[RMDB]
Notes
Chemical mapping of a 177-nucleotide RNA with 2A3 and DMS. Values cover nucleotides 27 to 126. Conditions: 150 mM KOAc, 10 mM MgCl2 and 150 mM bicine (pH 8.5), 24 C.
RNA sequence: GGGAACGACUCGAGUAGAGUCGAAAAUUUUCUCCUAAUAAUAGAUUUUAGUGGCUAUGCUUAUGGGAUAGAUUAAACUUGCCAUGAUCUGAAGAGGGAGGGUUUUUUCAUGUCCUCCUCCUAUAUGAAAUGUAUUGGUAUUCGUACCAAUACAUUUAAAAGAAACAACAACAACAAC
Reactivity to 2A3 in 0.01 (KOAc 150mM, MgCl2 10mM, bicine 150mM(pH8.5), 24C), signal-to-noise 8, nucleotides 027 to 126: u040u040u040u020c030u020c010c010u050a100a070u100a150a040u100a110g030a060u040u080u110u110a070g040u020g030g000c060u070a040u130g010c020u100u080a070u130g090g010g110a090u110a160g070a020u120u130a050a120a020c020u030u040g000c010c000a030u050g020a010u000c020u040g080a080a020g050a080g060g010g000a010g010g010g010u000u030u010u020u050u130c150a110u140g030u000c000c000u020c010c010u040c010c000u140a180u030a060u170g090
Reactivity to DMS in 0.01 (KOAc 150mM, MgCl2 10mM, bicine 150mM(pH8.5), 24C), signal-to-noise 9, nucleotides 027 to 126: u000u010u020u010c020u000c000c020u010a050a190u010a070a140u020a030g000a030u010u010u040u030a110g040u000g000g000c000u010a020u010g010c060u000u000a020u010g000g030g010a220u030a100g010a100u020u000a020a020a050c030u000u000g010c010c000a030u000g010a020u000c010u000g010a170a050g000a300g000g000g010a010g010g000g010u000u000u000u000u010u010c140a110u020g000u000c010c000u000c010c010u000c010c010u010a130u020a070u020g000